The record gives the reactivity of an RNA of 177 nucleotides to 2A3 and DMS. The RNA was probed in 150 mM KOAc, 10 mM MgCl2 and 150 mM bicine (pH 8.5) at 24 C. For 2A3, 1,593 sequencing reads were counted. For 2A3 the reverse transcriptase was SuperScript II with manganese. For DMS the reverse transcriptase was MarathonRT.
RNA sequence: GGGAACGACUCGAGUAGAGUCGAAAAGAUAUGGAAGAGUAAGGCUCUUGGAUUUAUAAUUGGAGCCAACUAUUCGGAAACGAAUACGAACGCUCCAAUUAUUGUCAGAGCUAUCUCUUCCUAAGUCCAGAAUACAAGACUUCGGUCUUGUAUUCUGAAAAGAAACAACAACAACAAC
Reactivity to 2A3 in 0.01 (KOAc 150mM, MgCl2 10mM, bicine 150mM(pH8.5), 24C), signal-to-noise 2, nucleotides 027 to 126: g010a060u100a070u220g020g010a010a030g040a020g050u190a300a230g150g000c000u030c070u190u300g250g000a060u110u300u120a030u110a010a000u010u000g000g000a000g030c000c010a010a010c000u000a010u020u000c010g040g060a040a070a060c000g000a020a000u040a030c080g070a110a010c090g000c000u040c010c010a000a010u000u000a000u000u000g000u000c030a000g000a000g000c000u000a030u020c010u030c000u030u020c000c000u010a110a010g010u010c030
Reactivity to DMS in 0.01 (KOAc 150mM, MgCl2 10mM, bicine 150mM(pH8.5), 24C), signal-to-noise 1, nucleotides 027 to 126: g000a140u020a300u020g000g000a010a000g010a020g000u020a170a300g020g000c010u000c000u000u050g030g000a010u000u030u000a010u000a010a000u000u000g020g010a010g010c010c030a040a210c300u000a000u000u000c000g000g000a150a120a300c040g020a030a000u000a000c090g000a110a180c300g020c040u000c020c000a010a010u000u000a020u000u020g000u000c000a040g010a000g020c000u000a200u030c010u020c000u000u000c000c000u010a030a060g010u010c060